[RMDB]
RNA sequence: GGGAACGACUCGAGUAGAGUCGAAAAUGCUCUCAUUGAUCAUGAAGUUUGGGAACUAAUGAUGGAGUCAAUAGUGUUGGGGCACAUUCUAUUUUGAGCUCUUUAGAGGGCAACACAAAGGGCUGGGCUUAGUUAUGUUGUUCGCAACAUAACUAAGAAAAGAAACAACAACAACAAC
Reactivity to DMS in 0.01 (KOAc 150mM, MgCl2 10mM, bicine 150mM(pH8.5), 24C), signal-to-noise 9, nucleotides 027 to 126: u010g010c030u000c010u000c050a130u010u010g010a060u000c040a050u000g010a120a100g010u000u000u000g020g010g010a090a060c030u000a110a030u010g000a050u000g000g010a060g010u000c060a030a050u000a060g010u000g010u010u000g000g000g010g010c080a070c070a050u000u000c070u010a100u000u000u000u000g010a080g010c020u000c010u000u000u010a140g020a050g010g000g010c030a040a070c100a060c100a030a070a090g000g010g010c060u000g000g000g010
Reactivity to 2A3 in 0.01 (KOAc 150mM, MgCl2 10mM, bicine 150mM(pH8.5), 24C), signal-to-noise 5, nucleotides 027 to 126: u060g000c010u010c000u000c030a090u070u170g080a030u030c020a030u040g080a120a050g050u070u130u190g130g030g100a020a030c020u040a080a040u050g040a030u060g060g020a020g020u030c020a030a050u030a050g060u060g040u080u120g040g020g030g000c030a010c000a070u140u000c050u110a150u090u120u050u120g070a040g020c000u000c000u090u090u040a100g020a030g050g020g000c000a010a040c030a000c000a020a090a010g050g000g000c040u050g010g040g000